The data come from the RNA Mapping Database (RMDB), library OK2TRN. An RNA of 177 nucleotides, treated with 2A3 and DMS and read out base by base. DMS adducts were read by reverse transcription with MarathonRT. The DMS profile rests on 1,505 reads. Reactivities are given for positions 27 through 126. As a SHAPE reagent, 2A3 marks flexible, mostly unpaired nucleotides at the ribose 2'-OH. The RNA was probed in 150 mM KOAc, 10 mM MgCl2 and 150 mM bicine (pH 8.5) at 24 C.

[RMDB]
RNA sequence: GGGAACGACUCGAGUAGAGUCGAAAAGCUAUAAAACUUUCCAUGCAUCCACUUUUUAUUUAACAGCUUUACUGAGGUAUAAUUGACAUACAGUAAACUACAUAAAGUGUCAAUUUGAUGGUUUGACAAUAUUCUAGGUCUUCGGACCUAGAAUAUUAAAAGAAACAACAACAACAAC
Reactivity to 2A3 in 0.01 (KOAc 150mM, MgCl2 10mM, bicine 150mM(pH8.5), 24C), signal-to-noise 2, nucleotides 027 to 126: g000c020u070a040u090a300a120a040a120c020u040u070u060c000c000a050u130g090c000a040u030c000c020a050c020u050u040u030u070u110a250u120u200u110a190a040c050a120g060c020u000u040u030a010c020u060g060a060g200g020u100a120u070a240a270u160u190g090a020c020a020u270a020c000a040g000u050a050a150a000c050u060a020c020a070u210a170a060a060g060u030g050u090c030a000a050u090u030u030g060a040u050g020g030u000u020u110g050a050c030
Reactivity to DMS in 0.01 (KOAc 150mM, MgCl2 10mM, bicine 150mM(pH8.5), 24C), signal-to-noise 2, nucleotides 027 to 126: g010c040u020a160u010a110a070a110a120c040u000u000u000c010c010a110u010g010c050a060u000c100c010a050c030u000u000u000u010u030a050u010u010u000a070a160c150a030g000c180u000u000u000a030c020u010g010a080g010g000u000a040u010a050a130u010u010g010a050c020a040u000a040c050a040g020u000a020a030a020c030u000a030c120a100u000a030a020a080g010u000g000u000c050a020a020u000u010u010g020a090u010g010g010u010u010u010g030a080c110